Source: RMDB library OK2TRN, as collected in RNAgym.
Chemical mapping of a 177-nucleotide RNA with 2A3 and DMS.
The 2A3 profile rests on 697 reads.
The reactions ran in a buffer of 150 mM KOAc, 10 mM MgCl2 and 150 mM bicine (pH 8.5), at 24 C.
Reactivities are given for positions 27 through 126.

RNA sequence: GGGAACGACUCGAGUAGAGUCGAAAAACAACAACCUAGGAAAUUACCUAGAGUGCGGUGUAAACCAGGAAUUUUGCGAAUCAUUGCAACAGGAAUUUAUGUUUAAUGAACCACAAUUAGUCAUAACCUAUCACGACCGAUUCGUCGGUCGUGAUAGAAAAGAAACAACAACAACAAC
Reactivity to 2A3 in 0.01 (KOAc 150mM, MgCl2 10mM, bicine 150mM(pH8.5), 24C), signal-to-noise 1, nucleotides 027 to 126: a000c020a030a010c010a030a040c000c020u000a010g040g000a100a190a240u270u140a270c020c010u040a070g020a040g070u050g010c040g040g000u040g010u020a070a050a000c010c010a060g060g050a070a070u140u120u010u080g120c080g020a000a000u120c030a030u060u210g090c000a020a040c000a010g000g210a210a080u070u190u070a060u110g040u000u030u010a050a040u070g030a030a030c050c010a030c030a070a090u090u030a050g010u080c020a080u030a070a050c050
Reactivity to DMS in 0.01 (KOAc 150mM, MgCl2 10mM, bicine 150mM(pH8.5), 24C), signal-to-noise 1, nucleotides 027 to 126: a030c070a140a040c060a020a050c010c000u000a010g070g010a030a220a090u000u000a170c000c000u000a000g030a060g070u000g010c300g080g040u000g000u000a070a090a050c070c020a090g030g000a030a090u000u000u000u000g000c020g020a090a200u030c030a080u020u000g030c240a060a000c090a050g030g050a110a030u000u020u000a090u000g000u000u000u000a030a030u000g000a010a090c090c030a040c010a000a170u000u010a010g000u020c120a170u010a050a110c280